[RMDB]
RNA sequence: GGGAACGACUCGAGUAGAGUCGAAAAGAUAUGGACAUAUGAAAGAAUCGAAGCAAGGGAGUCGAUGGUCGGAAACGACCAUACGACGAAGAACUUGACCCUUCGAUUCUUUCAUAUGUCCUAAGUCCUUAGGACUAAGGUUCGCCUUAGUCCUAAGAAAAGAAACAACAACAACAAC
Reactivity to DMS in 0.01 (KOAc 150mM, MgCl2 10mM, bicine 150mM(pH8.5), 24C), signal-to-noise 4, nucleotides 027 to 126: g010a090u010a300u010g020g010a010c000a010u010a000u000g000a020a000a020g020a040a000u000c000g000a020a030g010c030a020a020g000g010g000a120g010u000c000g010a040u000g010g010u010c010g020g000a110a140a260c000g020a030c000c000a010u000a050c020g020a010c000g000a080a140g020a150a160c010u000u000g000a170c280c250c020u000u000c000g010a010u000u000c000u000u000u000c010a000u000a000u000g010u000c000c000u010a010a070g000u010c030
The data come from the RNA Mapping Database (RMDB), library TTRINS.
An RNA of 177 nucleotides, treated with DMS and read out base by base.
The DMS profile rests on 5,086 reads.
For DMS the reverse transcriptase was MarathonRT.